[RMDB]
RNA sequence: GGGAACGACUCGAGUAGAGUCGAAAAACAAAGUAUAGACAGCUGUAAAGAAAUAUAAUUGGACAAAAAGAUUAUGUAUGAUCUAAUGCUAACAGACUGAGUAGGGAAACCCAGCAAGGUCUGUCUGUCUAGAUUUUUCUUGGCCUCUCUGAGCAUGUCUAGAGAUGUAUUUCGAUACAUCUCUAGAAAAAGAAACAACAACAACAAC
Reactivity to 2A3 in 0.01 (KOAc 150mM, MgCl2 10mM, bicine 150mM(pH8.5), 24C), signal-to-noise 2, nucleotides 027 to 156: a000c060a000a100a010g020u060a040u040a170g030a020c020a030g010c050u100g030u160a090a140a020g050a040a110a010u110a020u030a100a140u120u060g040g030a030c070a050a060a030a040a040g020a040u110u110a070u130g060u020a140u130g060a020u000c020u070a000a090u110g010c030u020a060a000c000a000g000a000c000u040g020a000g030u060a080g010g000g060a110a100a010c030c000c010a000g060c000a020a010g000g010u000c000u000g020u000c000u000g000u000c000u000a020g000a090u080u050u020u030u030c040u070u080g040g000c020c020u060c000u010c140u140g030a010g030c030a060u160g020
Reactivity to DMS in 0.01 (KOAc 150mM, MgCl2 10mM, bicine 150mM(pH8.5), 24C), signal-to-noise 1, nucleotides 027 to 156: a110c020a090a040a090g010u000a070u010a120g000a150c030a050g030c090u020g030u010a100a130a140g000a080a090a070u010a070u010a050a060u020u010g020g000a180c020a030a070a080a210a180g000a070u000u010a050u000g020u010a070u000g000a080u000c000u020a050a070u020g020c060u010a020a050c010a020g010a060c000u000g000a300g000u010a050g000g040g020a100a060a220c030c050c020a030g100c000a030a300g020g010u000c010u000g020u000c020u000g000u000c090u000a060g020a060u000u000u000u000u000c020u020u000g010g000c040c040u010c020u010c000u010g000a080g050c040a080u000g010